[RMDB]
RNA sequence: GGGAACGACUCGAGUAGAGUCGAAAAGAGUGCAAGGGCAAAAGCCGGCCUGACGUGAACCCGCAAAAUAAGGGUUCACGAGCCGAAAGGCGGGCCUAGCGAACCACCCUGGCCUUUUGGUGAGGCCUAAGGUCUAAAAGUUCGCUUUUAGACCUUAAAAAGAAACAACAACAACAAC
Reactivity to DMS in 0.01 (KOAc 150mM, MgCl2 10mM, bicine 150mM(pH8.5), 24C), signal-to-noise 9, nucleotides 027 to 126: g010a080g010u020g010c050a080a050g000g000g010c120a060a090a150a180g010c020c250g000g010c050c010u010g010a160c030g010u000g000a010a000c000c000c000g010c270a090a080a100a120u040a150a140g000g000g010u000u000c000a000c000g000a140g010c050c050g000a070a100a070g000g020c010g000g010g010c050c010u020a160g010c020g000a100a090c190c160a130c020c000c010u000g000g000c000c000u000u000u000u000g010g000u010g000a030g000g010c010c010
Reactivity to 2A3 in 0.01 (KOAc 150mM, MgCl2 10mM, bicine 150mM(pH8.5), 24C), signal-to-noise 7, nucleotides 027 to 126: g120a020g030u200g050c050a060a090g030g010g010c030a060a080a040a030g020c010c000g010g000c000c020u060g040a050c010g000u000g000a000a000c010c010c010g010c080a090a130a040a050u300a130a090g000g000g000u000u000c000a000c000g000a020g010c010c020g060a090a030a000g010g000c010g000g000g010c010c000u040a030g010c010g040a020a010c020c010a030c010c010c000u010g020g000c010c000u040u050u040u070g180g020u150g030a020g120g000c000c000
An RNA of 177 nucleotides, treated with DMS and 2A3 and read out base by base. Values are in units of 0.01, from 0 to 300, in steps of 10. Values cover nucleotides 27 to 126. The reactions ran in a buffer of 150 mM KOAc, 10 mM MgCl2 and 150 mM bicine (pH 8.5), at 24 C. The data come from the RNA Mapping Database (RMDB), libraries RFM100 and RFMREP.